An RNA of 207 nucleotides, treated with 2A3 and read out base by base. Reactivities are rounded to 0.1 and cut off at 0 and 3. The 2A3 profile rests on 636 reads. Values cover nucleotides 27 to 156.
[RMDB]
RNA sequence: GGGAACGACUCGAGUAGAGUCGAAAAGAUGUUCGCUGAUUCGUCAGCCGCAUGCCCAGGUGGCCGCGAUCUUCAAGGCUACGGCGCGGAUAGGUCAGCGCUGAUCGUUUUCCUCCAACGACGCUAUAAAAGGAACGAAGGUUCGCCUUCGUUCCAAGUGUGCAAUUACCUUCGGGUAAUUGCACACAAAAGAAACAACAACAACAAC
Reactivity to 2A3 in 0.01 (KOAc 150mM, MgCl2 10mM, bicine 150mM(pH8.5), 24C), signal-to-noise 1, nucleotides 027 to 156: g000a020u080g110u170u100c060g000c000u010g000a000u240u140c110g100u060c170a060g000c000c020g010c000a080u240g000c060c000c020a020g160g000u000g000g000c010c020g110c090g060a090u020c080u130u080c090a040a010g010g010c000u000a000c000g000g000c010g020c000g000g050a060u060a110g020g040u050c050a000g010c000g010c040u040g040a030u000c020g010u000u000u060u060c000c060u080c070c010a130a030c060g080a060c040g000c110u120a010u120a200a100a030a040g000g000a170a000c000g000a000a000g000g010u010u140c150g130c010c000u000u000c000g000u030u020c000c000a000a000